[RMDB]
RNA sequence: GGGAACGACUCGAGUAGAGUCGAAAAGCAACAGAUAACUGGAUGCAGCGUAGGAUUCUACGCAUAUCCAGUACGAAUGGUACCUGUAAAGAAAAUAAUUGUGGAUGUACAAGUACCAACAUGGGGUUAAGCGAUGGUGAUGUCAAUCACAUUUGCAUACUCAUACCAGGUUCGCCUGGUAUGAGUAAAAAGAAACAACAACAACAAC
Reactivity to DMS in 0.01 (KOAc 150mM, MgCl2 10mM, bicine 150mM(pH8.5), 24C), signal-to-noise 1, nucleotides 027 to 156: g030c050a100a100c060a090g030a120u010a120a050c000u000g010g020a010u000g030c180a160g010c000g000u000a020g000g020a160u000u010c010u000a010c010g020c000a280u000a040u000c010c000a020g010u000a030c020g020a080a190u000g000g010u000a030c010c000u000g000u000a040a040a140g010a170a070a120a160u000a100a170u010u000g020u000g000g000a260u020g010u020a020c000a030a020g000u000a010c010c000a020a150c100a100u020g000g000g010g050u000u000a040a040g000c020g010a060u010g000g000u010g030a100u000g020u000c150a090a100u010c020a040c040a140u000u000u010g060c020a300
Reactivity to 2A3 in 0.01 (KOAc 150mM, MgCl2 10mM, bicine 150mM(pH8.5), 24C), signal-to-noise 5, nucleotides 027 to 156: g040c020a020a110c010a070g040a110u090a150a080c000u000g000g010a000u050g010c160a080g000c090g000u010a010g050g150a300u300u100c000u000a000c000g000c000a000u020a000u020c000c010a000g000u020a000c010g130a110a080u080g020g000u000a000c000c010u020g010u070a010a130a020g170a080a150a060a070u240a060a110u160u130g050u080g160g040a040u060g000u040a000c000a010a020g010u000a000c000c010a010a030c070a070u120g050g000g000g000u050u130a070a030g010c010g010a020u070g070g130u020g020a030u030g080u200c080a060a050u060c010a000c010a070u050u050u110g000c000a020